[RMDB]
RNA sequence: GGGAACGACUCGAGUAGAGUCGAAAAGCAAACGACUCUAACUACUCUCUAGCAGCUUAGGCUAGCUAGCCAUCAACCACACGUUUCGCACGUGGACAGUGGAUUCUGAUGGUCAUAUUACAGUGUGCUAGCGAGGGAACUCCGUCCGGGGGUGAACCCACCAUUUCACGUUCGCGUGAAAUGGUGGAAAAGAAACAACAACAACAAC
Reactivity to 2A3 in 0.01 (KOAc 150mM, MgCl2 10mM, bicine 150mM(pH8.5), 24C), signal-to-noise 1, nucleotides 027 to 156: g080c010a000a050a090c000g000a000c000u100c010u020a130a110c010u130a120c000u070c020u030c000u020a000g000c070a020g010c030u110u100a130g130g090c040u090a050g010c020u050a000g000c000c000a040u040c040a040a160c000c000a010c010a020c050g000u010u030u040c300g050c060a020c050g020u140g020g030a010c030a070g080u050g000g040a060u250u000c030u170g010a000u010g000g040u060c060a060u040a080u170u110a020c020a040g100u100g020u010g300c000u000a000g000c010g000a030g000g020g040a040a010c030u020c040c000g000u020c010c050g040g030g000g000g030u080g000a050a010c000

About this RNA: The record gives the reactivity of an RNA of 207 nucleotides to 2A3. The 2A3 profile rests on 530 reads. It was measured as part of the RMDB library ARCHII. The reactions ran in a buffer of 150 mM KOAc, 10 mM MgCl2 and 150 mM bicine (pH 8.5), at 24 C. High 2A3 reactivity points to a flexible backbone, as in loops and unpaired stretches.